[RMDB]
RNA sequence: GGGAACGACUCGAGUAGAGUCGAAAAGAGCGUCGAGAGACGAAGAGAAGUGCACCGAUCAGCAAGGGAGAACGUAAUGGUGCACAAGAGUAAGUCAGUGAAACGUUCUCAGGGCACUGGAGGCAGAGGUAAUGAUAGUCUUCGGACUAUCAUUACCAAAAGAAACAACAACAACAAC
Reactivity to 2A3 in 0.01 (KOAc 150mM, MgCl2 10mM, bicine 150mM(pH8.5), 24C), signal-to-noise 8, nucleotides 027 to 126: g060a010g030c020g000u020c030g000a020g010a020g010a100c060g020a110a020g090a010g040a210a020g000u010g000c000a010c010c020g050a110u130c060a030g110c050a050a110g090g040g010a030g020a040a000c000g000u050a020a090u180g000g000u020g000c000a000c000a000a020g060a010g060u140a110a020g040u060c110a010g010u030g150a090a040a030c020g010u010u000c010u000c000a000g010g020g000c040a020c080u050g010g030a050g080g000c060a020g050a060
Reactivity to DMS in 0.01 (KOAc 150mM, MgCl2 10mM, bicine 150mM(pH8.5), 24C), signal-to-noise 7, nucleotides 027 to 126: g010a070g010c000g010u000c000g000a210g000a160g000a020c020g020a070a080g010a140g000a130a080g010u010g000c010a050c000c010g010a190u030c160a130g000c150a110a080g000g000g020a030g000a000a030c040g020u000a060a090u020g010g020u020g000c020a010c010a050a050g010a080g000u040a080a110g020u010c050a070g010u030g010a050a080a060c080g020u000u000c000u010c000a160g000g010g010c040a030c040u000g000g010a090g010g010c090a060g010a150